[RMDB]
Notes: This 177-nucleotide RNA was probed chemically with 2A3 and DMS. For DMS the reverse transcriptase was MarathonRT. For 2A3 the reverse transcriptase was SuperScript II with manganese. Values cover nucleotides 27 to 126.
RNA sequence: GGGAACGACUCGAGUAGAGUCGAAAAGCAAAAGAUUAUCCAGGUGUAGCGGUGAAAUUCGUACAGAUCUGGUGGAUAAUGAACCGGUGGCGAAGGCGAAAGAUAACCGCUGAAAAGAAGAAUUGAAUCAUACACUUUGUUUCGACAAAGUGUAUGAAAAAGAAACAACAACAACAAC
Reactivity to 2A3 in 0.01 (KOAc 150mM, MgCl2 10mM, bicine 150mM(pH8.5), 24C), signal-to-noise 2, nucleotides 027 to 126: g040c030a030a030a070a040g020a070u130u130a030u080c040c010a040g110g040u090g090u140a010g040c010g000g050u020g040a060a030a020u000u040c010g010u030a170c010a030g010a040u030c020u030g060g090u050g080g070a070u120a240a090u170g060a030a030c000c020g100g000u030g010g030c080g050a030a020g060g000c000g000a020a020a010g150a000u040a010a000c000c000g040c000u020g000a010a010a010a020g080a010a010g060a060a100u160u150g030a090a060
Reactivity to DMS in 0.01 (KOAc 150mM, MgCl2 10mM, bicine 150mM(pH8.5), 24C), signal-to-noise 6, nucleotides 027 to 126: g000c100a050a060a070a120g010a110u010u000a060u000c030c030a100g000g010u000g030u010a040g020c010g000g000u000g010a070a140a070u000u000c010g020u010a080c030a080g010a140u000c020u000g010g010u000g000g000a140u010a080a100u000g000a140a050c020c010g000g000u000g010g010c150g020a140a100g010g010c020g000a030a030a040g000a040u000a100a040c020c010g010c000u000g010a040a050a070a070g000a070a070g000a060a090u000u000g010a110a130